RNA sequence: GGGAACGACUCGAGUAGAGUCGAAAAGAUGGAGUGAGUGAUGGAGUGGGUUGCCAACUGUCAUUACUCCACUUGGUGCAGAAUAACUGUCAGAAAUCUAUUCACAUAUGCCCAAAGAAGUCUGCCCUUAUGUCAACACCUUCGGGUGUUGACAUAAAAAAGAAACAACAACAACAAC
Reactivity to DMS in 0.01 (KOAc 150mM, MgCl2 10mM, bicine 150mM(pH8.5), 24C), signal-to-noise 3, nucleotides 027 to 126: g000a080u010g000g000a030g030u020g000a010g000u010g010a020u000g000g010a060g000u030g020g000g060u070u030g000c010c010a050a060c000u000g000u000c000a070u000u000a020c000u010c000c020a070c010u000u000g030g000u030g000c010a090g000a050a050u000a070a140c110u020g000u010c290a110g000a090a070a090u040c080u000a020u000u000c040a100c170a100u040a170u000g000c000c030c020a030a020a100g020a130a150g000u010c020u000g000c000c010c020
Reactivity to 2A3 in 0.01 (KOAc 150mM, MgCl2 10mM, bicine 150mM(pH8.5), 24C), signal-to-noise 3, nucleotides 027 to 126: g080a130u100g000g020a000g000u040g040a020g110u000g000a000u000g000g030a280g150u010g000g010g110u300u190g170c010c000a010a000c000u030g000u050c010a000u000u020a000c000u000c000c020a020c010u030u040g020g000u220g000c000a000g020a080a040u130a140a020c050u080g060u160c050a030g080a030a060a010u000c010u100a130u090u020c010a060c030a130u170a130u160g050c030c000c000a000a000a000g030a040a000g050u050c020u030g010c000c000c000